Record summary: Conditions: 150 mM KOAc, 10 mM MgCl2 and 150 mM bicine (pH 8.5), 24 C. The record gives the reactivity of an RNA of 207 nucleotides to DMS and 2A3. For 2A3, 6,184 sequencing reads were counted. Reactivities are given for positions 27 through 156. The data come from the RNA Mapping Database (RMDB), library RSTRND.

RNA sequence: GGGAACGACUCGAGUAGAGUCGAAAAGGCAUGCCGAGCUGGUAGCAGAACUCGUAAAUUCGCUGCUGCAAACUUAUAGUUGCCAACGACGACAACUACGCUCUAGCUGCUUAAUGCGGCUAGCAGUCGCUAGGGGAUGCCUGUAAACCCGAAACGACGAACCUUAAAUGUUCGCAUUUAAGGUUCGAAAAGAAACAACAACAACAAC
Reactivity to DMS in 0.01 (KOAc 150mM, MgCl2 10mM, bicine 150mM(pH8.5), 24C), signal-to-noise 2, nucleotides 027 to 156: g000g020c010a040u000g040c030c040g010a040g000c010u000g040g030u000a030g030c020a060g020a080a160c130u010c120g030u000a090a070a120u000u000c080g020c010u000g000c030u000g030c000a070a030a040c010u000u000a100u000a020g010u000u000g010c000c000a080a130c190g000a170c000g000a000c010a010a050c000u000a010c040g010c020u000c000u000a010g000c000u000g010c010u000u000a070a100u000g000c030g040g010c000u010a010g000c070a040g000u000c000g040c040u000a130g030g050g020g000a150u000g000c010c000u010g000u000a030a090a100c000c000c010g000a060a060a090c040g020a300
Reactivity to 2A3 in 0.01 (KOAc 150mM, MgCl2 10mM, bicine 150mM(pH8.5), 24C), signal-to-noise 7, nucleotides 027 to 156: g000g000c000a000u040g160c000c010g010a010g020c030u070g070g000u040a010g000c050a050g010a120a100c050u050c170g080u140a080a130a130u220u130c060g020c050u020g010c010u010g000c000a110a050a040c050u150u130a050u030a150g010u010u020g010c030c020a120a030c130g160a020c050g010a020c010a010a010c010u030a030c040g010c000u010c000u010a000g010c010u010g010c010u070u170a090a040u300g000c000g000g000c000u010a000g000c010a010g020u080c050g000c030u030a030g000g000g040g000a000u000g000c000c010u030g010u080a050a060a030c000c010c000g040a100a080a010c090g070a010